The record gives the reactivity of an RNA of 177 nucleotides to 2A3.
RNA sequence: GGGAACGACUCGAGUAGAGUCGAAAAGCCUAGGAGUACGCUCCUAGGCAAGAGCUAGCAGGUACCGCUAGCAAAGAAAAGGUACCAAGACGGAAACGUCAAAGCCGACGUCUACGGACGUCGGCAAUGAGCACCAUGGAUUCGUCCAUGGUGCUCAAAAAGAAACAACAACAACAAC
Reactivity to 2A3 in 0.01 (KOAc 150mM, MgCl2 10mM, bicine 150mM(pH8.5), 24C), signal-to-noise 1, nucleotides 027 to 126: g000c000c000u010a010g000g000a000g020u050a040c250g020c060u040c000c000u000a020g020g040c000a010a000g000a000g000c000u000a000g000c160a080g050g000u000a000c000c010g000c000u000a000g000c030a050a060a000g020a010a050a020a040g000g000u000a010c000c000a000a040g000a000c050g020g000a060a150a000c040g000u000c000a020a000a080g020c000c020g000a000c000g040u000c000u040a040c210g110g000a000c010g000u000c040g030g010c000a000a000
Conditions: 150 mM KOAc, 10 mM MgCl2 and 150 mM bicine (pH 8.5), 24 C. 2A3 adducts were read by reverse transcription with SuperScript II with manganese.